[RMDB]
RNA sequence: GGGAACGACUCGAGUAGAGUCGAAAACGUCCGAUGCGGAAGUUCGUGCUUCCGUCGAACGCGGAAGUCGGACGGCGGCCAUGAGUCGCAACGCAAAGCCGCGGCAAGUGGAGUUAGCGAGAAGAGAAAAAGUCACGAGUGUUCGCACUCGUGACAACGUAAGAACUAUCUUCGGAUAGUUCUUACGAAAAGAAACAACAACAACAAC
Reactivity to 2A3 in 0.01 (KOAc 150mM, MgCl2 10mM, bicine 150mM(pH8.5), 24C), signal-to-noise 4, nucleotides 027 to 156: c010g020u030c010c010g030a050u070g000c010g020g030a020a070g040u100u250c130g110u300g040c010u010u000c020c000g000u030c040g050a080a030c060g000c020g080g000a030a030g000u010c000g000g000a010c010g010g000c010g010g000c030c010a160u180g020a040g050u010c020g000c050a070a030c040g010c100a090a130a050g060c040c030g000c000g010g030c040a060a040g040u070g010g030a060g040u160u130a050g080c080g040a030g040a120a000g030a020g030a040a050a060a040a020g000u000c000a000c000g000a000g000u020g020u050u070c200g020c090a000c010u000c000g000u000g000a000c000a000a000
Reactivity to DMS in 0.01 (KOAc 150mM, MgCl2 10mM, bicine 150mM(pH8.5), 24C), signal-to-noise 2, nucleotides 027 to 156: c060g040u000c010c010g010a090u000g030c030g040g000a030a080g010u010u000c200g010u030g000c000u010u010c020c000g110u000c040g020a120a120c160g000c000g010g020a100a030g030u000c040g040g000a070c000g000g000c000g070g020c000c020a160u000g010a300g010u000c030g010c030a070a040c040g000c050a150a140a280g010c010c020g020c050g000g000c030a120a150g030u000g000g000a230g010u000u000a060g030c060g000a140g000a070a130g030a170g000a120a090a100a090a150g020u010c010a000c000g030a080g040u000g010u000u000c300g060c000a040c000u000c000g000u000g020a000c000a000a060
This 207-nucleotide RNA was probed chemically with 2A3 and DMS. The data come from the RNA Mapping Database (RMDB), library M2RFPK.